[RMDB]
RNA sequence: GGGAACGACUCGAGUAGAGUCGAAAAGACUAGGACAAUUGGAUGGUUUGUUGACGAAGAUUCAGAGAUCGCUGAAGUCAUCCGUGAACUGGUCAGGGCAGUUACUAACAUUGAUCCUAAUACAAUGAUCUGUGUAAAGCUUCGGCUUUACACAGAUAAAAGAAACAACAACAACAAC
Reactivity to DMS in 0.01 (KOAc 150mM, MgCl2 10mM, bicine 150mM(pH8.5), 24C), signal-to-noise 3, nucleotides 027 to 126: g010a030c020u000a010g020g000a170c040a020a040u000u010g030g000a040u000g000g000u010u000u000g010u010u020g000a100c060g040a040a110g000a180u010u000c210a130g000a190g000a050u000c050g050c020u010g020a020a030g010u000c000a020u000c010c010g040u000g000a040a110c010u000g000g000u000c020a140g010g010g000c100a040g020u000u000a070c150u010a090a160c100a030u000u000g000a100u000c030c010u000a090a080u020a110c140a050a080u010g000
Reactivity to 2A3 in 0.01 (KOAc 150mM, MgCl2 10mM, bicine 150mM(pH8.5), 24C), signal-to-noise 2, nucleotides 027 to 126: g020a010c040u010a010g000g010a010c030a040a080u130u260g030g010a020u010g060g000u000u030u040g190u070u030g070a190c050g050a080a030g050a160u220u170c050a050g040a000g010a240u030c020g000c020u020g040a010a000g000u030c020a000u020c000c000g020u020g010a050a030c010u020g000g020u070c030a030g010g030g000c010a020g000u090u100a140c070u090a110a050c020a050u000u010g020a080u080c000c010u030a060a050u110a160c040a010a110u170g040